[RMDB]
RNA sequence: GGGAACGACUCGAGUAGAGUCGAAAAGGAUUUCAGCGUACUAGCGAAUUGAUGUUAGAUGGAUAGCAAUGACUGUAGGCUAUCCAAUGUGUGCAAAUCGCACAAUACGCUGAACUACAGUCAUGAGGAUCAACGUGUUAUUCGUAAUGUGUUGAUCAAAAGAAACAACAACAACAAC
Reactivity to DMS in 0.01 (KOAc 150mM, MgCl2 10mM, bicine 150mM(pH8.5), 24C), signal-to-noise 9, nucleotides 027 to 126: g000g020a130u040u010u000c000a000g010c000g020u000a050c010u000a010g000c000g020a130a170u050u040g000a110u040g010u000u000a010g010a250u000g000g000a010u000a010g010c010a050a040u010g010a010c000u000g010u000a020g000g010c000u000a000u000c010c000a000a010u010g010u000g010u000g000c160a100a130a160u070c080g000c000a010c010a020a070u000a000c000g000c010u000g000a010a020c080u000a010c000a000g000u000c000a120u040g010a160g010
Reactivity to 2A3 in 0.01 (KOAc 150mM, MgCl2 10mM, bicine 150mM(pH8.5), 24C), signal-to-noise 9, nucleotides 027 to 126: g080g020a060u010u010u000c000a000g000c000g000u000a000c000u000a000g010c020g110a130a220u210u230g120a150u300g030u010u000a010g000a050u010g000g000a000u000a000g000c010a030a050u070g000a000c000u000g000u010a000g020g010c000u000a000u000c000c000a000a000u010g000u000g000u000g010c060a060a060a180u300c030g000c000a000c000a000a010u010a000c000g000c000u000g000a000a000c000u010a000c000a000g000u000c000a020u120g050a030g120